The record gives the reactivity of an RNA of 177 nucleotides to 2A3 and DMS. Values cover nucleotides 27 to 126. The data come from the RNA Mapping Database (RMDB), library OK1LIB. For DMS, 1,063 sequencing reads were counted. The RNA was probed in 150 mM KOAc, 10 mM MgCl2 and 150 mM bicine (pH 8.5) at 24 C. DMS adducts were read by reverse transcription with MarathonRT.

RNA sequence: GGGAACGACUCGAGUAGAGUCGAAAAUAGACAUAGCUAUAACACCUGGAGUAAAGGGAAAAGUACCAAGUUAUAUAAAUAAAGUAAUCGACCUUGGAAAUAGAUAUAUUGAUAUAUCUACCUUUAUAUAAUAUCGAUGGUUCGCCAUCGAUAUUAUAAAAGAAACAACAACAACAAC
Reactivity to 2A3 in 0.01 (KOAc 150mM, MgCl2 10mM, bicine 150mM(pH8.5), 24C), signal-to-noise 2, nucleotides 027 to 126: u050a020g030a000c090a060u170a020g040c000u060a050u030a230a090c010a120c090c030u040g020g010a120g100u200a060a060a020g060g000g000a080a100a020a000g010u010a030c020c020a000a000g000u060u000a120u060a030u080a220a160a040u300a120a130a000g060u060a100a070u100c150g070a060c040c000u020u000g020g000a020a090a050u050a000g010a000u000a000u020a030u020u160g080a010u110a000u070a020u250c000u000a020c000c000u070u040u000a230u000
Reactivity to DMS in 0.01 (KOAc 150mM, MgCl2 10mM, bicine 150mM(pH8.5), 24C), signal-to-noise 1, nucleotides 027 to 126: u000a030g000a130c190a070u020a030g000c000u020a000u000a050a130c220a150c000c010u050g000g010a160g000u020a010a010a040g010g000g000a100a000a050a170g000u000a110c000c000a030a010g040u000u010a080u040a120u100a060a070a130u000a100a040a100g010u000a040a010u040c130g000a050c070c000u010u010g010g000a080a040a100u000a080g000a040u000a010u000a070u110u040g000a150u000a010u000a000u000c000u000a010c110c000u010u000u000a050u000